About this RNA:
Chemical mapping of a 177-nucleotide RNA with 2A3 and DMS. The reactions ran in a buffer of 150 mM KOAc, 10 mM MgCl2 and 150 mM bicine (pH 8.5), at 24 C. 2A3 adducts were read by reverse transcription with SuperScript II with manganese. Reactivities are given for positions 27 through 126. Source: RMDB library OK2TRN, as collected in RNAgym.

RNA sequence: GGGAACGACUCGAGUAGAGUCGAAAAGUCGCCGCUUCUACAUCAACGCCCAGCGCGGGCGAGGGAGGCGUCCUACGGGGGUGACCCAUUCGCCGGCAUGGUAGAGGACCGCAAGAUUGCCUCGACGCCCUAUUAGCCAGUUCGCUGGCUAAUAGGGAAAAGAAACAACAACAACAAC
Reactivity to 2A3 in 0.01 (KOAc 150mM, MgCl2 10mM, bicine 150mM(pH8.5), 24C), signal-to-noise 1, nucleotides 027 to 126: g030u030c020g020c010c000g000c010u000u110c030u050a080c010a120u130c040a120a000c070g050c010c000c030a060g110c210g040c050g100g000g000c000g000a000g000g030g010a170g000g000c000g000u000c010c010u030a080c090g140g020g010g010g050u070g120a200c010c000c010a050u040u050c030g050c030c030g070g000c020a050u070g050g000u030a050g010a000g070g040a030c030c040g060c010a050a020g040a180u090u200g050c000c010u030c030g010a010c040g000
Reactivity to DMS in 0.01 (KOAc 150mM, MgCl2 10mM, bicine 150mM(pH8.5), 24C), signal-to-noise 2, nucleotides 027 to 126: g000u000c030g020c060c060g010c020u000u000c040u000a120c080a120u020c150a110a120c090g000c010c010c020a110g030c200g060c090g000g010g000c010g010a030g020g000g010a060g010g010c050g010u000c010c020u000a120c110g020g010g000g010g010u000g000a200c020c000c000a170u000u020c050g040c040c020g000g030c030a080u000g000g020u000a100g000a100g000g000a060c100c050g010c060a060a070g000a050u010u010g010c010c010u020c010g010a160c170g000